Conditions: 150 mM KOAc, 10 mM MgCl2 and 150 mM bicine (pH 8.5), 24 C.
Chemical mapping of a 177-nucleotide RNA with DMS and 2A3.
DMS adducts were read by reverse transcription with MarathonRT.

[RMDB]
RNA sequence: GGGAACGACUCGAGUAGAGUCGAAAACACAGGCGACUUAAUCGGAGAGCGGUUACACGCGAGGAAGAAGAAAUUAUUACAUCAGUAGACUCGAGAUUACUACAACUUGCGUUGCUAUCUCAAAUAAUAUUGUGGGAUUAUUCGUAAUCCCACAAUAAAAAGAAACAACAACAACAAC
Reactivity to DMS in 0.01 (KOAc 150mM, MgCl2 10mM, bicine 150mM(pH8.5), 24C), signal-to-noise 4, nucleotides 027 to 126: c080a090c150a100g010g000c040g000a090c070u010u010a070a070u000c080g020g000a110g000a110g020c060g000g020u010u010a080c140a070c070g020c030g000a040g010g000a120a060g000a100a060g010a080a060a080u010u000a070u000u000a080c110a070u000c060a060g000u000a080g010a060c070u010c040g000a110g010a070u000u010a080c090u010a070c100a050a130c030u000u000g010c100g020u000u000g020c080u000a090u000c000u010c010a080a050a070u020a090a110
Reactivity to 2A3 in 0.01 (KOAc 150mM, MgCl2 10mM, bicine 150mM(pH8.5), 24C), signal-to-noise 2, nucleotides 027 to 126: c070a010c020a040g050g070c010g020a050c030u150u160a030a050u140c090g060g000a020g000a030g070c080g000g000u030u050a050c070a000c050g040c000g000a000g060g040a020a060g020a050a010g090a040a160a040u230u200a080u060u160a090c050a110u110c000a010g010u030a020g020a030c020u040c120g090a070g000a100u070u100a050c050u030a020c010a090a020c030u000u020g000c010g000u010u060g000c010u050a050u110c030u000c010a060a160a060u220a030a050

For 2A3 the reverse transcriptase was SuperScript II with manganese.